[RMDB]
RNA sequence: GGGAACGACUCGAGUAGAGUCGAAAAGACGAACGAAAACACAAAUGUUCCACGGUGCAGAAGGGUCCCUCACAUGAGGAUCACCCAUGUAAGUCGGACAGGAUAUGCUUUUGGGAAAAAGAGAGAAGACUAAUUGCCGUUUCGACGGCAAUUAGUCAAAAGAAACAACAACAACAAC
Reactivity to DMS in 0.01 (KOAc 150mM, MgCl2 10mM, bicine 150mM(pH8.5), 24C), signal-to-noise 1, nucleotides 027 to 126: g000a190c040g030a070a160c130g000a030a050a070a050c040a030c040a040a150a020u000g000u000u000c000c120a070c010g000g060u000g010c000a080g000a090a060g000g010g010u000c120c000c000u000c000a080c160a090u010g000a000g000g000a120u000c120a060c000c030c030a060u020g000u010a120a040g020u000c090g020g000a050c010a020g020g000a110u000a130u000g000c040u000u000u000u000g040g000g010a030a050a040a000a080g000a130g010a000g010a030a060
Reactivity to 2A3 in 0.01 (KOAc 150mM, MgCl2 10mM, bicine 150mM(pH8.5), 24C), signal-to-noise 1, nucleotides 027 to 126: g030a020c060g030a090a020c010g030a000a000a070a000c060a010c010a000a080a100u120g000u070u010c000c000a010c020g010g110u140g050c010a020g060a260a120g090g030g000u000c000c020c000u030c010a110c050a170u300g010a020g010g020a030u190c050a050c000c000c010a000u020g040u020a080a040g030u000c000g050g000a000c020a000g000g050a080u070a060u280g030c060u000u030u100u060g090g000g000a030a060a030a000a000g080a000g000a000g050a180a020
The data come from the RNA Mapping Database (RMDB), library M2PK90. The record gives the reactivity of an RNA of 177 nucleotides to DMS and 2A3. As a SHAPE reagent, 2A3 marks flexible, mostly unpaired nucleotides at the ribose 2'-OH. The DMS profile rests on 583 reads. Reactivities are given for positions 27 through 126. DMS (dimethyl sulfate) methylates the pairing face of unpaired adenines and cytosines. The RNA was probed in 150 mM KOAc, 10 mM MgCl2 and 150 mM bicine (pH 8.5) at 24 C.